This 207-nucleotide RNA was probed chemically with DMS and 2A3.
The RNA was probed in 150 mM KOAc, 10 mM MgCl2 and 150 mM bicine (pH 8.5) at 24 C.
[RMDB]
RNA sequence: GGGAACGACUCGAGUAGAGUCGAAAAACACGAUUAUAUGCUUGAUUUUUAGAAUCUUGCACAUGGAUGCCACUGUAUUGUACUCUGCUAAAUAAAUGUCCUGAACUGUGGUUGAUCCACUGGUCAGUGAACAGUGCAGUGAACCUGUAAGGCAAAGUAAUUGAGUGUAGUUCGCUACACUCAAUUAAAAAGAAACAACAACAACAAC
Reactivity to DMS in 0.01 (KOAc 150mM, MgCl2 10mM, bicine 150mM(pH8.5), 24C), signal-to-noise 3, nucleotides 027 to 156: a050c040a070c060g020a200u000u000a070u010a010u010g000c010u010u000g010a010u000u000u000u000u020a210g000a070a010u000c010u010u000g000c010a010c000a060u000g010g020a090u010g020c010c000a050c050u000g020u000a060u000u000g020u000a090c020u010c070u000g010c050u010a060a090a130u010a060a060a110u010g010u000c030c000u010g000a020a030c010u000g030u010g020g020u000u000g010a200u000c010c010a030c010u010g020g010u000c020a030g040u000g010a090a060c020a030g020u000g020c020a030g000u000g020a060a070c060c040u000g010u000a090a200g010g020c020a050a040a110g020
Reactivity to 2A3 in 0.01 (KOAc 150mM, MgCl2 10mM, bicine 150mM(pH8.5), 24C), signal-to-noise 6, nucleotides 027 to 156: a000c060a010c060g080a070u140u170a110u100a030u260g010c010u000u030g030a030u050u040u050u070u160a170g110a110a010u020c000u020u030g030c030a030c030a100u130g110g030a080u090g060c050c020a010c020u020g020u070a100u120u050g040u070a090c030u030c050u100g030c020u110a090a070a090u160a080a180a100u220g020u030c010c010u020g020a060a030c010u030g000u010g000g080u040u190g070a080u100c000c000a000c010u010g030g000u010c000a000g010u000g080a020a010c010a010g020u020g040c000a000g010u000g030a010a010c000c010u030g060u120a050a050g030g010c000a010a070a090g070